[RMDB]
RNA sequence: GGGAACGACUCGAGUAGAGUCGAAAAGGAUGCAACGUAGUAAUAUGUGUGACAGCUACCUCUUGAGUUACGCAUUACUAUUCAUGAUGUCAUUCAAGAGGUAGAUGACGUCAUGAAAUCUGCAUCGCUACAUGAGUCUAUUCGUAGAUUCAUGUAGAAAAGAAACAACAACAACAAC
Reactivity to DMS in 0.01 (KOAc 150mM, MgCl2 10mM, bicine 150mM(pH8.5), 24C), signal-to-noise 9, nucleotides 027 to 126: g010g000a010u000g010c010a050a110c170g020u000a030g000u010a110a110u000a030u000g010u000g010u000g010a030c030a120g000c010u000a020c010c010u000c000u000u000g000a040g010u000u000a050c260g000c010a010u000u000a060c210u000a120u010u010c190a070u000g000a030u000g010u000c080a020u000u000c010a010a010g000a020g000g010u000a010g000a020u000g010a080c190g000u000c000a010u000g000a040a070a080u010c140u000g010c000a010u000c000g000
Reactivity to 2A3 in 0.01 (KOAc 150mM, MgCl2 10mM, bicine 150mM(pH8.5), 24C), signal-to-noise 9, nucleotides 027 to 126: g030g000a000u000g000c000a020a030c040g030u030a020g010u030a040a120u030a070u090g090u010g000u010g030a030c000a010g010c000u010a010c000c000u010c000u010u010g010a010g010u010u020a010c010g000c000a000u020u060a070c050u140a070u070u120c020a010u030g070a070u050g010u000c000a000u000u010c010a010a000g010a010g030g000u010a000g000a000u010g030a010c030g000u000c000a000u010g040a040a040a020u050c030u020g000c000a000u000c000g000